[RMDB]
RNA sequence: GGGAACGACUCGAGUAGAGUCGAAAAGCGCAACAGCGCCCAGGAGCCCUGGUAGCUCCAGCCGGCCUCGAGGUCGGCCACCGCCAGGCUGGCCUGGCGCGGGUCGUCUGCCGGACGCUGCGAGCCAUCCUAUCGUACUAUUCGUAGUACGAUAGGAAAAAGAAACAACAACAACAAC
Reactivity to DMS in 0.01 (KOAc 150mM, MgCl2 10mM, bicine 150mM(pH8.5), 24C), signal-to-noise 7, nucleotides 027 to 126: g010c070g010c070a270a080c060a060g010c010g010c040c020c030a170g010g000a050g000c050c030c100u010g010g020u020a120g000c040u010c010c030a080g000c020c020g010g010c030c200u010c180g010a150g010g020u000c010g000g000c010c010a010c080c010g000c020c030a020g010g010c090u000g010g010c010c000u000g000g010c060g010c250g000g010g000u000c010g010u010c010u000g010c040c030g000g000a120c030g000c010u000g010c030g000a140g000c010c070a150
Reactivity to 2A3 in 0.01 (KOAc 150mM, MgCl2 10mM, bicine 150mM(pH8.5), 24C), signal-to-noise 5, nucleotides 027 to 126: g040c010g010c030a060a070c020a120g010c000g020c020c010c000a020g030g010a020g000c020c050c260u180g130g060u150a020g000c010u000c000c010a010g030c010c000g010g000c020c060u130c150g110a090g010g130u040c010g000g030c000c000a030c000c000g010c020c010a010g040g010c080u180g130g150c010c000u000g020g000c000g000c030g000g020g010u030c010g000u010c020u060g050c030c020g000g010a020c020g000c020u010g010c040g040a040g000c020c000a050
Structure probing data (DMS and 2A3) for a 177-nucleotide construct. The 2A3 profile rests on 9,807 reads. The DMS profile rests on 11,143 reads. Conditions: 150 mM KOAc, 10 mM MgCl2 and 150 mM bicine (pH 8.5), 24 C. In probing experiments dimethyl sulfate is read out at A N1 and C N3, which are open when not base-paired.